[RMDB]
RNA sequence: GGGAACGACUCGAGUAGAGUCGAAAAUUUUAGCUGAAUAAUGACGGCCGAAAGGGCUAACCCGGGAAUGACAAGACAACUGUUAGCCGAAGUCAGACUAGCUGAUAGAAGUUGUUAGAAUAUCCCAUGUGUAAGCGUGUUUCGACGCGCUUGCGCGAAAAGAAACAACAACAACAAC
Reactivity to DMS in 0.01 (KOAc 150mM, MgCl2 10mM, bicine 150mM(pH8.5), 24C), signal-to-noise 9, nucleotides 027 to 126: u010u000u000u000a060g010c030u010g010a130a130u010a110a110u010g010a250c060g010g010c030c030g010a050a070a090g000g010g010c130u000a060a080c040c050c040g020g010g010a060a080u010g010a130c110a080a140g000a040c050a030a140c030u000g010u000u000a030g010c010c010g010a070a070g000u000c160a070g000a140c070u000a080g010c010u000g000a040u000a060g010a090a100g000u000u000g000u000u000a070g010a110a090u000a090u000c000c000c010a110
Reactivity to 2A3 in 0.01 (KOAc 150mM, MgCl2 10mM, bicine 150mM(pH8.5), 24C), signal-to-noise 9, nucleotides 027 to 126: u050u060u030u050a020g000c020u040g060a110a060u160a200a060u110g050a050c030g030g000c030c020g120a180a060a020g130g020g000c020u020a040a040c010c020c020g000g010g030a090a100u110g030a050c030a070a060g030a030c010a030a020c040u020g010u030u020a010g010c020c020g110a060a000g020u040c050a020g020a030c020u020a010g000c010u010g010a020u020a070g090a100a010g020u020u030g030u040u040a030g040a090a030u070a060u080c010c020c030a040